[RMDB]
Source: RMDB library OK3TST, as collected in RNAgym. Structure probing data (2A3) for a 207-nucleotide construct. For 2A3 the reverse transcriptase was SuperScript II with manganese. 2A3 is a SHAPE reagent: it acylates the 2'-hydroxyl of flexible nucleotides of all four kinds.
RNA sequence: GGGAACGACUCGAGUAGAGUCGAAAAUAAGGGAAAGAGAAGGGAAAAAAAGGGUUGAACAGGUAAGUGAAAUGUACAGCUAAUACGUAAGUUUCAUUUUAACCACCAGAGUAAUUAGAAGCUACAUCUAGUUCUUUGGCUGUAGCAUUGAUUAUAAGUAUCACUCCUGCUUCGGCAGGAGUGAUACAAAAGAAACAACAACAACAAC
Reactivity to 2A3 in 0.01 (KOAc 150mM, MgCl2 10mM, bicine 150mM(pH8.5), 24C), signal-to-noise 1, nucleotides 027 to 156: u120a020a040g070g000g040a110a080a040g040a030g000a030a060g020g020g040a000a000a000a000a000a000a180g060g000g000u050u060g010a100a090c100a130g050g000u010a000a060g000u010g000a000a000a000u080g030u000a010c020a000g000c050u040a090a000u060a100c090g000u060a050a070g000u020u000u080c000a030u030u000u020u060a020a000c000c010a000c010c000a020g050a030g080u120a010a110u100u060a020g020a190a000g030c070u070a010c000a000u030c010u020a050g100u300u020c030u200u050u040g000g000c020u020g030u050a080g000c040a020u100u070g010a000u000u170a090u050a270a000